[RMDB]
RNA sequence: GGGAACGACUCGAGUAGAGUCGAAAACAAACAAAACUUGCACGAGCAAGAAGUAGCAAAAACUUCUGAGGCUAUAGCCUUAGAGAAGCUGUAGACACGUGCAGGAAACAAAACAAAACAAAACAAACAUGUAGGCCGUGUUCGCACGGCCUACAUGAAAAGAAACAACAACAACAAC
Reactivity to 2A3 in 0.01 (KOAc 150mM, MgCl2 10mM, bicine 150mM(pH8.5), 24C), signal-to-noise 1, nucleotides 027 to 126: c020a000a040a000c000a000a000a000a050c000u000u000g000c000a000c010g120a040g170c070a110a000g040a070a000g000u000a020g230c140a170a000a000a000a000c000u000u000c000u040g000a070g240g000c000u040a010u120a290g000c000c000u060u050a050g000a000g000a170a000g030c000u010g000u000a000g000a120c000a000c240g100u000g000c000a000g000g060a000a010a000c050a010a010a010a010c040a000a070a000a010c000a170a150a000a130c000a050a190a000